An RNA of 177 nucleotides, treated with 2A3 and DMS and read out base by base. Reactivities are given for positions 27 through 126. The 2A3 profile rests on 1,578 reads. For 2A3 the reverse transcriptase was SuperScript II with manganese.
[RMDB]
RNA sequence: GGGAACGACUCGAGUAGAGUCGAAAAUGGAAGGUUUUGGGUAGAGGAAUGGCAUGAUUCAUCUUGGAUUUCAACAGGAUCACCCUGGCUGCCAUGUCGAGAGUAACCUUCUGGUGAGCAAGGGCAACUAACGGAUCUCUUUCGAGAGAUCCGUUAGAAAAGAAACAACAACAACAAC
Reactivity to 2A3 in 0.01 (KOAc 150mM, MgCl2 10mM, bicine 150mM(pH8.5), 24C), signal-to-noise 2, nucleotides 027 to 126: u100g050g030a030a000g000g040u090u090u180u110g050g000g020u090a020g010a030g080g120a140a040u030g020g020c000a030u070g010a040u130u060c010a080u050c140u070u150g030g020a060u050u160u120c070a070a060c020a020g090g000a080u120c040a070c020c010c000u010g040g000c030u010g040c000c000a020u060g060u030c050g020a030g010a030g130u010a010a020c010c000u040u030c010u020g060g030u050g100a040g000c020a000a020g020g020g000c030a040a020
Reactivity to DMS in 0.01 (KOAc 150mM, MgCl2 10mM, bicine 150mM(pH8.5), 24C), signal-to-noise 3, nucleotides 027 to 126: u010g000g010a060a000g020g000u000u010u020u000g010g000g040u000a070g010a220g000g010a060a010u010g000g010c040a090u010g010a050u000u000c060a100u010c170u000u000g010g000a090u010u010u020c140a020a110c060a030g020g010a120u000c200a140c140c010c020u020g010g000c070u000g010c000c000a020u000g010u000c040g010a160g000a220g010u000a010a040c010c000u010u010c020u000g000g010u000g010a060g020c070a060a060g010g000g010c220a030a160